RNA sequence: GGGAACGACUCGAGUAGAGUCGAAAAAUAUUCUUUAUUCCUCCAAUUUAGGUAUGUAUUGAAACUAUGGAAGCGGGUUUUCUCACUAAAGAUCUCGCUAUAUGUAUUAAAGGGAUGAGCAAGUGAGAAUAUUUAUACGCUUCGGCGUAUAAAUAUUAAAAGAAACAACAACAACAAC
Reactivity to DMS in 0.01 (KOAc 150mM, MgCl2 10mM, bicine 150mM(pH8.5), 24C), signal-to-noise 3, nucleotides 027 to 126: a050u030a060u030u030c030u020u010u020a110u020u000c020c030u010c080c090a070a100u020u020u010a040g000g010u000a020u030g000u010a060u020u030g010a130a110a090c080u030a050u010g000g000a060a060g020c170g000g000g010u000u010u000u000c010u000c010a010c010u020a080a090a160g000a030u000c020u010c010g030c110u020a070u010a060u020g000u030a100u020u020a060a080a160g000g010g010a010u010g000a080g050c200a070a050g030u010g000a030g010
Reactivity to 2A3 in 0.01 (KOAc 150mM, MgCl2 10mM, bicine 150mM(pH8.5), 24C), signal-to-noise 2, nucleotides 027 to 126: a000u160a170u090u040c030u050u170u180a140u000u040c010c030u040c050c010a130a110u140u160u140a140g040g020u180a090u210g070u030a100u070u270g120a140a090a020c040u090a040u120g090g010a060a030g010c050g000g050g000u020u020u090u030c000u000c010a040c000u140a300a200a030g000a060u050c020u000c010g000c010u030a010u010a000u110g040u030a030u110u160a130a120a040g050g000g000a010u050g030a000g100c100a110a000g010u000g020a010g060
Chemical mapping of a 177-nucleotide RNA with DMS and 2A3. The reactions ran in a buffer of 150 mM KOAc, 10 mM MgCl2 and 150 mM bicine (pH 8.5), at 24 C. For 2A3, 644 sequencing reads were counted.